[RMDB]
RNA sequence: GGGAACGACUCGAGUAGAGUCGAAAAUAGCAAUCAUUGGUCGCGCCUGGCGACGUAUUCUUUUACCCAGAUUCACGGCCCGGACAUCUCGUCCAUCACGGCUCGCCCAAUCAGGCCAGCCGUGGCCCACAGCUUGAGCUUUCGAGCUCAAGCUGUGAAAAGAAACAACAACAACAAC
Reactivity to 2A3 in 0.01 (KOAc 150mM, MgCl2 10mM, bicine 150mM(pH8.5), 24C), signal-to-noise 3, nucleotides 027 to 126: u160a000g120c090a040a050u060c030a060u020u210g130g000u060c020g010c010g010c080c170u030g090g020c020g020a040c020g030u020a040u020u120c000u020u100u030u090a090c000c000c000a020g080a180u090u090c070a030c070g030g000c000c020c020g040g010a030c010a130u130c080u060c140g040u000c010c000a020u060c000a000c000g000g000c000u000c000g010c000c000c000a100a170u160c060a020g010g020c000c020a000g000c010c000g010u020g010g020c000c010
Reactivity to DMS in 0.01 (KOAc 150mM, MgCl2 10mM, bicine 150mM(pH8.5), 24C), signal-to-noise 1, nucleotides 027 to 126: u040a120g090c300a090a130u060c090a150u000u000g030g000u000c050g080c000g080c160c000u000g010g010c050g020a050c080g000u000a040u000u010c020u000u000u000u000a180c010c000c030a050g030a090u060u000c040a030c030g000g010c000c080c180g000g100a000c000a050u000c060u000c080g000u060c000c000a130u140c070a000c000g000g000c010u040c300g000c010c000c140a000a030u040c280a070g020g050c010c050a010g010c000c000g000u000g010g000c200c010

The data come from the RNA Mapping Database (RMDB), library RFM100. Structure probing data (2A3 and DMS) for a 177-nucleotide construct. The RNA was probed in 150 mM KOAc, 10 mM MgCl2 and 150 mM bicine (pH 8.5) at 24 C.